[RMDB]
RNA sequence: GGGAACGACUCGAGUAGAGUCGAAAAGCUGGGAGGCUGCAACUGAUCUCUGCAGACCAGAGGCCAAGCCCUGUGGAGCGUCUCAAGGCCAAACGUGCCCCAUGGGAAAGGGUCGACAUGGCAGUGCACUCUGUAAAAGGUUCGCCUUUUACAGAGUAAAAGAAACAACAACAACAAC
Reactivity to DMS in 0.01 (KOAc 150mM, MgCl2 10mM, bicine 150mM(pH8.5), 24C), signal-to-noise 7, nucleotides 027 to 126: g010c030u000g010g030g020a130g010g010c020u000g020c050a090a120c060u000g010a070u000c040u000c080u000g010c060a080g010a140c060c030a050g010a230g000g010c010c040a070a120g010c170c010c010u010g010u010g000g000a080g010c040g010u000c040u000c100a080a130g010g000c030c050a050a080a090c140g010u010g000c040c020c010c030a060u000g000g000g000a080a150a110g000g010g010u000c030g010a100c100a080u000g000g000c040a080g000u000g020c150
Reactivity to 2A3 in 0.01 (KOAc 150mM, MgCl2 10mM, bicine 150mM(pH8.5), 24C), signal-to-noise 5, nucleotides 027 to 126: g030c030u020g010g030g040a050g060g030c020u030g000c030a050a050c040u070g100a110u070c040u000c030u070g010c030a020g050a240c020c000a020g020a040g060g000c010c010a050a010g000c020c000c000u010g040u060g030g030a050g030c030g050u020c020u030c110a090a080g070g010c020c010a120a120a030c030g020u040g010c020c000c010c010a040u060g030g000g000a040a070a040g040g000g010u020c000g010a030c030a090u060g040g000c010a010g030u040g060c040